Annotation:
Chemical mapping of a 177-nucleotide RNA with DMS and 2A3. The data come from the RNA Mapping Database (RMDB), library OK2TST. DMS adducts were read by reverse transcription with MarathonRT. The 2A3 profile rests on 7,293 reads.
RNA sequence: GGGAACGACUCGAGUAGAGUCGAAAACGGCCGUGCGCGGCGCAUUCGGCAACGCUCGUUGCCGCCGGCACAAAGACCUUGCGCAAAUCGCCCGGCGUUGCGCCAACGCCGGCACGGCGGCGCAACACAUUAUACCGCACUUCGGUGCGGUAUAAUGAAAAGAAACAACAACAACAAC
Reactivity to DMS in 0.01 (KOAc 150mM, MgCl2 10mM, bicine 150mM(pH8.5), 24C), signal-to-noise 6, nucleotides 027 to 126: c120g010g020c010c010g010u000g000c020g030c100g010g010c020g020c060a080u000u010c090g000g000c000a040a010c020g030c210u020c200g020u010u000g010c010c020g030c130c080g000g020c030a050c090a060a240a130g000a100c090c040u000u000g000c010g010c030a050a070a100u000c060g010c300c020c040g010g000c020g000u000u000g010c050g020c050c020a170a100c050g000c000c010g000g020c020a010c020g000g000c200g000g010c010g000c030a030a060c200a210
Reactivity to 2A3 in 0.01 (KOAc 150mM, MgCl2 10mM, bicine 150mM(pH8.5), 24C), signal-to-noise 4, nucleotides 027 to 126: c030g070g020c010c010g030u070g000c290g010c020g070g010c000g010c030a090u130u130c040g020g000c020a060a020c030g090c190u150c240g030u010u020g000c000c010g010c010c010g020g000c020a010c050a100a080a000g100a110c010c020u030u060g000c020g000c020a100a110a130u160c040g010c030c030c000g020g000c010g010u040u070g020c030g030c050c010a030a020c000g000c010c020g000g000c010a000c000g010g000c000g040g010c030g000c010a050a050c040a000